[RMDB]
RNA sequence: GGGAACGACUCGAGUAGAGUCGAAAAUAGGAAUGUCUGAAAGUGCAUUCUGAAUGGGUGAUAAGAUUCAUCCAAGGCUAAAUAUAAGUUAGGAGAUCGAUAGCAUACAAGUACCGUGAGGGAAAGGGCCCGACAGUAAUUUCGAUUACUGUCGGGCAAAAGAAACAACAACAACAAC
Reactivity to 2A3 in 0.01 (KOAc 150mM, MgCl2 10mM, bicine 150mM(pH8.5), 24C), signal-to-noise 1, nucleotides 027 to 126: u040a010g130g000a020a010u000g020u000c140u180g090a080a000a000g200u160g020c000a000u000u010c000u000g040a140a170u050g010g030g040u000g000a000u010a090a170g110a120u000u000c000a000u000c010c000a060a000g040g040c020u030a000a060a060u190a170u010a170a080g090u030u160a040g000g100a040g000a050u020c070g010a070u040a010g060c000a000u110a250c000a160a070g040u010a020c040c000g020u050g000a060g000g010g000a010a040a000g000g090
Reactivity to DMS in 0.01 (KOAc 150mM, MgCl2 10mM, bicine 150mM(pH8.5), 24C), signal-to-noise 1, nucleotides 027 to 126: u060a260g000g000a000a000u000g000u020c100u000g000a090a080a090g000u050g000c000a000u000u000c050u010g000a200a150u000g010g030g060u000g000a040u000a080a120g010a140u030u070c040a040u010c010c020a130a090g000g000c010u030a050a120a090u040a100u020a000a010g000u000u000a090g010g000a060g060a050u040c070g050a060u040a030g030c040a120u000a030c200a000a070g080u000a110c090c070g000u170g000a190g000g000g000a060a190a010g000g000
Structure probing data (2A3 and DMS) for a 177-nucleotide construct. For DMS, 959 sequencing reads were counted. For 2A3, 542 sequencing reads were counted. For 2A3 the reverse transcriptase was SuperScript II with manganese. Conditions: 150 mM KOAc, 10 mM MgCl2 and 150 mM bicine (pH 8.5), 24 C. It was measured as part of the RMDB library RFM100.